[RMDB]
RNA sequence: GGGAACGACUCGAGUAGAGUCGAAAAGAUAUGGAUGUAGCUUUUGACGUUUCCUACUCGGAAACGAGUGUCAAACGAUAAGCUAGAUCCUAAGUCAAAGUCCAUGGAGCUUCGGCUCCAUGGACAAGGGAAAUUGUACGUUCGCGUACAAUUUCCCAAAAGAAACAACAACAACAAC
Reactivity to 2A3 in 0.01 (KOAc 150mM, MgCl2 10mM, bicine 150mM(pH8.5), 24C), signal-to-noise 1, nucleotides 027 to 126: g020a010u050a020u050g020g000a030u050g070u300a000g000c020u000u100u190u300g300a200c110g010u000u000u020c010c020u000a040c000u010c000g000g060a000a080a040c010g010a000g010u030g010u050c070a030a030a000c120g230a300u030a080a000g000c000u020a020g040a070u000c010c010u020a090a030g000u000c080a170a080a000g000u070c000c000a010u010g000g000a000g000c080u170u250c300g110g000c000u040c000c000a010u000g000g000a010c000a000a000